This 207-nucleotide RNA was probed chemically with DMS and 2A3.
RNA sequence: GGGAACGACUCGAGUAGAGUCGAAAACUUGUAUCUUAGUGCUUGUAGUCUGAAAAAACUCAUAAAUUCUCAGUGUUCUCAUCAGCUUCCGUCUCCUUAACCAUGAGACUUGAGUUAAACAAGAUCACUACAUUAAAAACACUGGUUCGCCAGUGAACAUUAACAAUUAGUUCGCUAAUUGUUAAUGAAAAGAAACAACAACAACAAC
Reactivity to DMS in 0.01 (KOAc 150mM, MgCl2 10mM, bicine 150mM(pH8.5), 24C), signal-to-noise 3, nucleotides 027 to 156: c060u000u000g020u000a130u000c030u000u000a050g020u000g010c050u000u000g020u000a090g000u000c010u000g000a000a120a150a140a070a030c040u010c020a100u000a050a060a110u000u010c010u000c000a050g010u000g010u000u000c010u000c020a110u010c070a080g030c050u020u000c100c050g020u000c040u010c010c050u010u010a090a120c080c080a180u000g000a080g020a050c300u010u000g020a050g020u000u000a060a070a140c060a120a070g010a070u000c030a060c020u000a030c040a100u000u000a010a040a090a100a090c010a010c010u000g000g030u010u010c300g030c000c000a030g010u000g000a030a130
Reactivity to 2A3 in 0.01 (KOAc 150mM, MgCl2 10mM, bicine 150mM(pH8.5), 24C), signal-to-noise 7, nucleotides 027 to 156: c030u060u090g030u100a130u060c040u040u080a050g020u020g070c010u020u030g020u060a060g060u040c090u090g000a030a070a020a030a070a070c090u110c080a110u190a210a150a130u230u040c050u010c030a040g030u020g040u170u020c020u000c030a100u030c030a030g010c010u090u030c040c020g050u020c020u030c030c000u070u080a070a070c030c020a050u120g010a000g000a010c000u010u020g010a010g010u030u080a060a120a030c040a040a020g020a060u050c020a010c060u060a030c020a060u120u220a080a060a050a040a000c000a000c010u000g000g040u040u040c200g020c050c000a000g000u000g000a020a000

For 2A3, 5,573 sequencing reads were counted.
It was measured as part of the RMDB library RFM130.
The reactions ran in a buffer of 150 mM KOAc, 10 mM MgCl2 and 150 mM bicine (pH 8.5), at 24 C.